The record gives the reactivity of an RNA of 170 nucleotides to 2A3 and DMS.
The DMS profile rests on 6,776 reads.
The 2A3 profile rests on 3,686 reads.
For DMS the reverse transcriptase was MarathonRT.
RNA sequence: GGGAACGACUCGAGUAGAGUCGAAAAAGUGGAAGGCGGGGAGGCGGGGUUCCCGGGCUUACCUACGGGAACUGCUGGUUUCCCCUUAUGUCCAGUCCCUCUCCCGUCCUGGUGAAGGGAGAUUCCGUGAGCAGCCACUUCGGUGGCUGCAAAAGAAACAACAACAACAAC
Reactivity to 2A3 in 0.01 (KOAc 150mM, MgCl2 10mM, bicine 150mM(pH8.5), 24C), signal-to-noise 3, nucleotides 027 to 129: a000g050u030g000g030a030a010g050g000c040g000g000g000g000a000g000g000c050g010g050g000g000u000u000c000c010c000g000g010g000c020u130u060a050c070c020u010a100c000g030g000g020a010a000c030u160g240c010u070g140g090u040u010u010c010c000c030c030u030u150a060u080g010u000c000c000a020g080u020c000c000c000u030c000u000c000c010c000g060u030c040c010u260g110g000u220g080a040a000g000g010g040a020g030a030u010u020c020c050g010u040g040a090
Reactivity to DMS in 0.01 (KOAc 150mM, MgCl2 10mM, bicine 150mM(pH8.5), 24C), signal-to-noise 3, nucleotides 027 to 129: a210g070u020g000g040a030a010g030g060c300g050g000g010g050a000g040g020c040g010g070g060g010u020u020c000c020c040g070g070g000c180u040u070a000c190c060u000a020c070g070g000g000a020a020c000u040g050c010u020g000g070u000u000u050c010c000c010c050u000u040a050u120g010u020c020c000a030g050u010c000c040c090u010c080u000c070c030c020g040u010c020c020u000g000g000u150g050a050a050g000g000g000a080g010a070u040u030c030c040g030u050g000a130